[RMDB]
RNA sequence: GGGAACGACUCGAGUAGAGUCGAAAACUUGGUGGGCUAAUUUCUGGCCUGCCCUAUCCAAGCACAGAGUUGGAUCAUGUGGUCCAAUUGAAAGAAUGGGCUACUAGAUUCCUAAAGUGGGGUGGACCGCGUGAGGCUGGUUUCACAGAGCAACGAAGUCUAAUUAUGACUUCGGUCAUAAUUAGACAAAAGAAACAACAACAACAAC
Reactivity to DMS in 0.01 (KOAc 150mM, MgCl2 10mM, bicine 150mM(pH8.5), 24C), signal-to-noise 2, nucleotides 027 to 156: c080u010u000g030g030u000g020g040g020c010u000a040a150u000u000u010c100u000g010g040c000c010u010g050c000c000c020u000a070u010c030c030a070a160g010c100a110c060a100g040a120g010u000u010g010g010a050u000c030a250u000g040u000g010g010u000c000c000a020a160u000u000g000a180a190a170g000a090a140u000g010g000g020c010u000a090c040u010a300g000a110u000u000c010c040u020a080a060a130g000u010g020g000g000g020u000g000g000a090c040c020g030c080g000u000g010a070g020g020c020u010g030g000u000u000u000c030a130c040a160g000a140g010c020a040a100c040g020a100a140
Reactivity to 2A3 in 0.01 (KOAc 150mM, MgCl2 10mM, bicine 150mM(pH8.5), 24C), signal-to-noise 3, nucleotides 027 to 156: c030u050u080g010g000u020g000g010g000c030u030a100a130u090u150u090c120u120g030g000c000c010u000g010c000c000c000u080a090u030c000c010a020a020g090c050a040c020a070g110a010g100u090u090g040g000a000u010c010a030u090g030u040g010g010u010c010c000a030a090u080u110g080a170a110a040g130a060a070u040g000g000g010c000u010a010c010u040a080g050a090u110u140c010c000u140a100a090a040g060u080g010g040g000g010u030g010g010a040c030c020g020c030g030u090g040a060g000g090c030u040g030g010u010u030u030c030a030c020a020g040a020g060c060a040a070c060g070a110a010